[RMDB]
RNA sequence: GGGAACGACUCGAGUAGAGUCGAAAAAUCGAUUAAUAUGCCGCGUAAUAUAUGCAUGCGCAUCGAUUAAUCGAUCGCGGCGCAUGCAUGCAUCGUACGAUAUGCUAUAGCGCGCGCUAAUCGGCGCGUGACAAGGCAGUUUCGACUGCCUUGUCACAAAAGAAACAACAACAACAAC
Reactivity to DMS in 0.01 (KOAc 150mM, MgCl2 10mM, bicine 150mM(pH8.5), 24C), signal-to-noise 4, nucleotides 027 to 126: a080u010c020g010a010u000u000a060a110u010a100u010g000c050c060g020c010g000u000a110a180u010a080u000a050u000g000c010a000u000g000c010g000c000a020u000c010g010a020u010u000a100a100u010c280g000a000u000c020g010c080g010g000c000g000c010a000u000g000c020a010u020g010c040a020u000c140g040u000a090c230g000a110u010a020u000g010c010u000a070u000a300g000c010g020c020g010c060g010c040u000a030a030u000c030g010g010c300g030c180
Reactivity to 2A3 in 0.01 (KOAc 150mM, MgCl2 10mM, bicine 150mM(pH8.5), 24C), signal-to-noise 5, nucleotides 027 to 126: a000u060c010g010a010u020u050a040a110u150a090u300g020c050c020g000c010g030u050a100a070u080a040u040a010u160g020c010a000u000g000c000g000c000a010u010c000g010a000u040u120a180a300u160c200g000a000u010c010g000c030g010g000c000g000c000a000u000g000c010a010u010g000c000a000u030c030g140u130a120c100g050a160u040a020u240g000c000u040a050u120a210g000c000g000c000g000c020g020c030u010a010a010u020c000g040g000c090g010c080